[RMDB]
RNA sequence: GGGAACGACUCGAGUAGAGUCGAAAACACGAAGACGCAAAAGAUACUAUCCGCCCCGUAAUCCUUUUGAAACCACUCAAGCUUAUGGUUCACGUUAUAGAACACAGGAGACGCUUGCAUUAUUGGAGCACGUCCGUCAGUUCGCUGACGGACGUGCAAAAGAAACAACAACAACAAC
Reactivity to 2A3 in 0.01 (KOAc 150mM, MgCl2 10mM, bicine 150mM(pH8.5), 24C), signal-to-noise 1, nucleotides 027 to 126: c170a000c000g090a070a000g130a000c000g030c110a030a020a030a020g200a000u070a190c000u010a240u000c000c070g000c000c000c000c000g090u000a000a130u070c090c010u000u000u020u220g010a080a030a060c010c000a080c000u050c030a110a000g010c000u190u050a070u110g000g000u000u000c000a000c030g000u130u030a070u210a200g130a150a090c260a000c040a000g030g030a000g040a070c000g000c170u000u040g010c000a160u000u000a300u300u000g080g000a040
An RNA of 177 nucleotides, treated with 2A3 and read out base by base. The reactions ran in a buffer of 150 mM KOAc, 10 mM MgCl2 and 150 mM bicine (pH 8.5), at 24 C. 2A3 adducts were read by reverse transcription with SuperScript II with manganese. It was measured as part of the RMDB library OK1LIB. As a SHAPE reagent, 2A3 marks flexible, mostly unpaired nucleotides at the ribose 2'-OH. Values cover nucleotides 27 to 126.